[RMDB]
RNA sequence: GGGAACGACUCGAGUAGAGUCGAAAACUAGGAGUUGCUAAGUGGGAUCUUUCCUCCAGUACAGCGAAUUUGGUUGAUAUCCCUGCCCUGUAAGUCCAAGGAAUUGCUUGUGUUUCUUUUCAGCAAUGAUAAGUUUCUAACACAUCAAUCCAAAUUCAAACAUUGGAUAAUUCGUUAUCCAAUGUUUAAAAGAAACAACAACAACAAC
Reactivity to 2A3 in 0.01 (KOAc 150mM, MgCl2 10mM, bicine 150mM(pH8.5), 24C), signal-to-noise 6, nucleotides 027 to 156: c010u060a070g040g010a030g040u130u110g090c070u110a090a040g060u090g030g060g020a070u070c050u050u090u030c020c010u020c010c010a040g030u090a090c060a060g040c040g120a070a070u070u070u060g030g020u020u020g030a040u030a030u090c000c010c000u020g010c010c010c000u030g020u060a080a040g070u030c060c050a060a060g060g010a100a110u030u020g030c090u040u010g020u000g010u020u010u040c000u020u020u010u000c020a020g010c030a070a100u020g020a020u020a040a010g000u010u120u030c100u090a040a010c020a000c010a030u010c010a010a000u000c010c000a040a060a050u100u100c030
Reactivity to DMS in 0.01 (KOAc 150mM, MgCl2 10mM, bicine 150mM(pH8.5), 24C), signal-to-noise 5, nucleotides 027 to 156: c040u010a140g020g010a220g030u000u000g020c020u000a070a140g030u000g010g010g010a090u000c070u000u010u000c020c000u000c030c020a120g020u000a110c080a150g010c090g030a030a100u000u000u000g010g020u000u000g010a100u000a100u000c000c000c020u010g000c010c010c030u020g010u010a070a080g010u000c030c050a100a140g020g010a080a080u000u000g010c100u000u000g030u000g020u000u000u000c010u000u010u000u000c030a080g000c090a070a120u000g010a140u010a040a090g010u000u000u000c050u000a120a070c040a030c030a040u000c020a030a050u000c010c010a050a060a120u000u000c060